[RMDB]
Annotation
Chemical mapping of a 177-nucleotide RNA with 2A3 and DMS. For DMS, 20,117 sequencing reads were counted. For 2A3, 29,443 sequencing reads were counted. DMS adducts were read by reverse transcription with MarathonRT. Values cover nucleotides 27 to 126.

RNA sequence: GGGAACGACUCGAGUAGAGUCGAAAACUAUUGUGGUUCGCCACAAUAGGCACGGCUGUUUUUCUCGCUGACUUUCAGCCCCAAACAAAAAAGUCAGCAUAAUUGUACUGCGCUUCGGCGCAGUAAACAUAAUCACUACAUUCGUGUAGUGAUUAUGAAAAGAAACAACAACAACAAC
Reactivity to 2A3 in 0.01 (KOAc 150mM, MgCl2 10mM, bicine 150mM(pH8.5), 24C), signal-to-noise 6, nucleotides 027 to 126: c000u000a000u010u000g000u010g030g050u030u070c220g050c060c000a000c000a000a000u000a000g010g000c080a020c120g010g010c000u010g010u010u010u000u010u010c070u050c100g000c000u000g000a000c000u010u010u010c010a000g000c000c000c010c050a030a070a050c030a020a020a010a000a000a000g000u010c000a000g000c000a000u000a000a000u020u060g020u020a010c000u000g000c010g010c010u020u070c200g110g000c000g000c000a000g000u000a000a000a000
Reactivity to DMS in 0.01 (KOAc 150mM, MgCl2 10mM, bicine 150mM(pH8.5), 24C), signal-to-noise 9, nucleotides 027 to 126: c000u000a000u000u000g020u000g000g010u000u020c230g020c000c000a010c000a010a000u000a010g000g010c160a090c270g000g000c010u000g000u000u010u000u000u000c060u010c250g000c000u000g000a010c000u000u000u000c000a000g000c000c000c120c130a050a030a200c110a000a000a010a000a010a020g010u000c000a000g010c000a010u000a030a090u010u010g010u000a010c000u000g010c000g020c000u000u010c180g020g010c000g000c000a000g000u000a010a060a150